Structure probing data (2A3 and DMS) for a 177-nucleotide construct.
[RMDB]
RNA sequence: GGGAACGACUCGAGUAGAGUCGAAAAAACGUCCUUCUUCAUCGGCGUACAUUCCAGUGACGGACACAGAGCGGUGGACGGGCAGCCUGCUGGCCUCCAUGAAGACGAUUGGCAGCUUCAGGCGUCGUAUGCGAGGUAGUUUCGACUACCUCGCAUAAAAAGAAACAACAACAACAAC
Reactivity to 2A3 in 0.01 (KOAc 150mM, MgCl2 10mM, bicine 150mM(pH8.5), 24C), signal-to-noise 1, nucleotides 027 to 126: a010a000c090g030u010c070c000u150u090c080u160u090c030a050u050c030g040g030c030g030u010a040c010a130u110u100c030c010a000g070u020g170a010c000g010g040a030c000a000c020a090g040a010g080c040g030g020u000g000g050a070c060g000g040g010c010a010g000c000c000u050g030c040u000g020g080c000c010u000c030c000a010u030g050a100a030g070a040c030g070a110u070u080g100g010c030a010g010c010u060u030c070a020g030g000c020g010u080c040g010
Reactivity to DMS in 0.01 (KOAc 150mM, MgCl2 10mM, bicine 150mM(pH8.5), 24C), signal-to-noise 2, nucleotides 027 to 126: a060a030c090g000u000c020c050u000u000c040u000u000c050a040u000c110g000g020c070g010u010a070c120a140u000u000c040c010a160g000u010g010a100c060g000g010a060c070a070c150a110g000a050g020c070g010g020u000g020g010a050c090g000g000g020c020a080g000c030c020u000g040c090u010g010g020c020c020u010c040c030a040u000g010a100a070g000a110c150g000a090u000u010g020g020c070a050g000c070u000u010c060a050g000g010c070g000u000c080g010
Source information: It was measured as part of the RMDB library OK2TRN. The reactions ran in a buffer of 150 mM KOAc, 10 mM MgCl2 and 150 mM bicine (pH 8.5), at 24 C. For DMS the reverse transcriptase was MarathonRT.